Structure probing data (2A3 and DMS) for a 177-nucleotide construct. High 2A3 reactivity points to a flexible backbone, as in loops and unpaired stretches. It was measured as part of the RMDB library TTRDEL.
[RMDB]
RNA sequence: GGGAACGACUCGAGUAGAGUCGAAAAGAUAUGGAAGUUUGCAAGGACCCACUUCCGUGUGUCGGAAACGACACAUGAGUGCUGAUGACCAAACUUCCUAAGUCAAAUCCGAUGUUCGCAUCGGAAACAUCAAUUCACUGUUCGCAGUGAAUUGAUGAAAAGAAACAACAACAACAAC
Reactivity to 2A3 in 0.01 (KOAc 150mM, MgCl2 10mM, bicine 150mM(pH8.5), 24C), signal-to-noise 3, nucleotides 027 to 126: g010a020u050a030u140g000g000a020a010g000u020u030u020g080c160a150a180g140g070a230c080c070c070a070c070u220u010c100c000g020u000g000u000g000u000c010g010g000a060a030a030c010g010a000c000a000c010a010u010g010a020g040u070g040c150u140g070a290u150g060a070c040c000a000a000a020c000u000u050c000c000u010a080a010g030u000c040a050a010a180u000c000c000g000a020u020g040u070u120c300g000c120a000u010c010g000g000a000a020a030
Reactivity to DMS in 0.01 (KOAc 150mM, MgCl2 10mM, bicine 150mM(pH8.5), 24C), signal-to-noise 4, nucleotides 027 to 126: g000a020u010a300u000g000g000a010a010g010u010u000u000g010c090a060a130g020g010a140c170c200c000a060c010u000u000c160c050g020u000g010u000g000u020c000g000g000a070a090a160c010g020a010c000a000c000a010u000g010a020g020u000g020c220u000g010a080u000g000a300c300c010a020a010a000c000u000u000c000c000u010a020a080g010u010c040a070a080a100u000c000c000g010a000u000g010u000u030c220g010c010a010u000c010g010g000a030a050a130
Description: 2A3 adducts were read by reverse transcription with SuperScript II with manganese. The DMS profile rests on 2,782 reads.